RNA sequence: GGGAACGACUCGAGUAGAGUCGAAAACACGGGUGAGAAGUUAGCCAACCAUCCGGCUGGUAUGUGCAACCCGGGUGGUGGUUGACUUCUUUCUCGUUAAAAAGUACUUCUGCUUCGGCAGAAGUACGAUGCUUAAAAACUUCGGUUUUUAAGCAUCAAAAGAAACAACAACAACAAC
Reactivity to DMS in 0.01 (KOAc 150mM, MgCl2 10mM, bicine 150mM(pH8.5), 24C), signal-to-noise 4, nucleotides 027 to 126: c100a050c000g000g010g010u010g000a010g010a020a010g010u000u000a000g000c000c000a050a110c010c000a010u000c010c010g010g040c180u000g000g000u010a080u010g010u010g010c090a070a070c250c010c010g020g000g040u000g000g010u000g000g000u000u000g000a010c010u000u000c010u000u000u000c000u000c000g010u000u000a030a060a070a100a120g000u000a000c000u000u000c000u000g000c000u000u010c220g030g000c000a000g010a010a010g000u000a000c000
Reactivity to 2A3 in 0.01 (KOAc 150mM, MgCl2 10mM, bicine 150mM(pH8.5), 24C), signal-to-noise 3, nucleotides 027 to 126: c030a000c000g010g000g000u010g010a000g000a000a010g000u000u020a000g000c010c020a080a210c050c000a000u010c000c010g020g000c050u080g030g130u300a230u280g190u140g110c040a040a030c010c010c000g000g000g000u000g000g000u000g000g000u000u000g000a000c000u000u010c000u000u000u000c000u000c000g000u000u000a000a060a000a000a010g000u000a010c000u000u010c000u000g020c000u030u050c130g130g000c000a000g000a000a000g000u000a000c000